[RMDB]
RNA sequence: GGGAACGACUCGAGUAGAGUCGAAAACACAUUCUAUUCGUAGAAUGUGGAACGUAGAGAGAUCGACAGCGUCGCAGCUAUGUCGAACCAGGAAGAGCGCGCAGGGAUCGGGCUUCGGCCCGAUCAAUGAGCCCCUCAAAUUCGUUUGAGGGGCUCAAAAAGAAACAACAACAACAAC
Reactivity to DMS in 0.01 (KOAc 150mM, MgCl2 10mM, bicine 150mM(pH8.5), 24C), signal-to-noise 2, nucleotides 027 to 126: c010a030c010a010u000u000c000u000a040u000u020c180g010u000a010g010a010a010u010g020u000g000g000a070a070c080g000u000a060g010a110g010a110g010a100u000c010g010a020c030a070g030c060g020u010c250g020c160a110g010c030u000a060u010g000u010c010g020a040a120c070c020a120g010g010a040a010g010a040g020c060g030c070g040c100a060g000g000g030a020u010c000g020g000g000c000u000u010c220g010g010c000c010c000g020a000u000c020a020a090